[RMDB]
RNA sequence: GGGAACGACUCGAGUAGAGUCGAAAAGAUAUGGAUGUAUUGUCAGCGUGAAACGUUCGUUGAAAGGACAUCGGAAACGAUGUCCUGGAGAACGGAGUACGCGCUUGGAUUUAUACAUCCUAAGUCAAACGUCAGGUGAGUUCGCUCACCUGACGAAUCGCAUACACAAGUUCGCUUGUGUAUGCGAAAAAGAAACAACAACAACAAC
Reactivity to DMS in 0.01 (KOAc 150mM, MgCl2 10mM, bicine 150mM(pH8.5), 24C), signal-to-noise 2, nucleotides 027 to 156: g000a060u000a300u020g020g010a000u000g030u000a030u000u010g050u000c070a300g000c000g000u010g020a180a140a180c020g020u010u000c000g070u010u000g020a300a230a060g010g040a020c000a010u000c010g000g000a160a160a240c000g000a020u010g040u000c010c010u010g010g000a140g000a010a010c000g000g000a100g010u000a200c180g020c020g010c030u000u000g030g020a040u000u000u000a040u000a030c050a040u010c000c010u000a060a130g010u000c030a090a090a190c030g010u010c020a010g000g040u000g000a010g010u000u010c300g050c020u010c020a000c020c010u010g000a000c000g010a050a000
Reactivity to 2A3 in 0.01 (KOAc 150mM, MgCl2 10mM, bicine 150mM(pH8.5), 24C), signal-to-noise 4, nucleotides 027 to 156: g030a030u070a050u110g010g000a000u000g000u010a000u010u040g030u030c000a010g000c000g010u070g050a050a020a050c030g010u010u010c030g160u240u050g010a010a010a010g000g000a000c000a000u010c010g020g020a080a050a020c000g000a000u000g000u000c000c000u000g000g000a030g000a000a000c010g000g000a000g010u010a020c160g010c010g000c020u040u130g070g000a010u090u300u050a000u010a000c000a000u010c000c000u010a070a020g000u000c040a140a000a000c010g010u000c000a000g000g010u000g010a000g000u060u140c240g050c130u000c000a000c000c000u000g000a000c000g000a000a010